[RMDB]
RNA sequence: GGGAACGACUCGAGUAGAGUCGAAAAUACUCAAAUCAGCUGUUGCUCGCCAAACACGCGCUCGGCGGCGUUGUAAUUGGCGGCUCGAGAGUCUUGCAAUGCCGUUACGAAUUUGAAGCUCAGGCGCCCUAUAGGUACCUUUCGAGGUACCUAUAGGAAAAGAAACAACAACAACAAC
Reactivity to 2A3 in 0.01 (KOAc 150mM, MgCl2 10mM, bicine 150mM(pH8.5), 24C), signal-to-noise 9, nucleotides 027 to 126: u130a030c020u010c040a080a100a150u100c040a050g050c030u070g040u150u080g030c030u080c030g000c000c010a020a100a050c060a020c040g020c000g030c020u040c060g300g160c060g020g010c020g080u040u110g020u030a070a080u060u080g040g000c010g040g000c020u030c020g190a190g000a000g040u010c010u040u020g020c020a000a030u050g010c010c010g040u060u130a080c050g030a050a070u100u070u160g100a060a010g000c010u020c050a030g040g000c010g020c010
Reactivity to DMS in 0.01 (KOAc 150mM, MgCl2 10mM, bicine 150mM(pH8.5), 24C), signal-to-noise 4, nucleotides 027 to 126: u040a090c020u000c040a090a090a100u030c180a100g030c070u000g020u000u010g000c010u020c020g010c010c000a040a090a070c130a050c090g020c020g020c040u010c090g010g000c070g000g010c010g030u000u030g010u000a030a120u010u010g000g000c010g000g000c030u010c080g000a090g020a090g000u010c010u010u000g010c020a040a010u010g010c070c000g000u000u020a110c100g010a080a130u010u010u020g000a060a130g000c030u010c050a150g000g000c020g000c250